[RMDB]
RNA sequence: GGGAACGACUCGAGUAGAGUCGAAAAACAGUCAUUCCUACAGUCAUCAGUAAAGAUUUUUAUUAAGUAGAUUCACUAUGUAAAGUACAUGGAAUGAACUAUGAAGUAAAACAUAAUAUCACUGGUACAAUGAAAUAAAUCAUGAGCCAUUAAAAGAACCAUUUAAAUGCUUCGGCAUUUAAAUGGUAAAAGAAACAACAACAACAAC
Reactivity to DMS in 0.01 (KOAc 150mM, MgCl2 10mM, bicine 150mM(pH8.5), 24C), signal-to-noise 1, nucleotides 027 to 156: a030c020a000g000u000c020a080u000u000c000c000u020a140c150a170g000u000c070a060u000c020a080g000u000a110a270a300g000a060u020u000u020u030u000a020u000u000a060a300g000u000a000g000a190u000u000c020a190c020u000a060u060g000u020a020a060a200g030u000a080c050a000u000g000g020a060a160u000g000a040a070c020u000a000u000g020a260a080g000u000a020a000a000a110c140a020u020a060a120u000a200u000c050a050c080u000g000g040u000a060c040a090a080u000g000a000a020a180u020a110a110a120u020c090a030u000g000a120g000c010c050a090u000u000a110a090a090a090g070a090
Reactivity to 2A3 in 0.01 (KOAc 150mM, MgCl2 10mM, bicine 150mM(pH8.5), 24C), signal-to-noise 3, nucleotides 027 to 156: a000c040a030g100u060c040a050u010u070c020c020u020a030c040a040g070u060c010a080u010c000a030g040u100a070a200a060g040a150u080u030u090u040u050a130u080u020a170a010g010u020a010g110a300u030u040c010a000c030u020a000u010g000u040a080a300a250g110u090a060c010a020u010g020g060a150a130u060g020a000a050c000u000a020u100g010a070a010g010u040a000a020a000a020c040a060u150a160a040u030a150u120c020a010c040u010g020g000u030a010c020a060a030u060g050a020a030a150u210a020a080a020u110c040a050u080g030a010g030c010c040a070u120u260a040a050a040a060g140a030
An RNA of 207 nucleotides, treated with DMS and 2A3 and read out base by base.
Source: RMDB library OK3TST, as collected in RNAgym.
For 2A3 the reverse transcriptase was SuperScript II with manganese.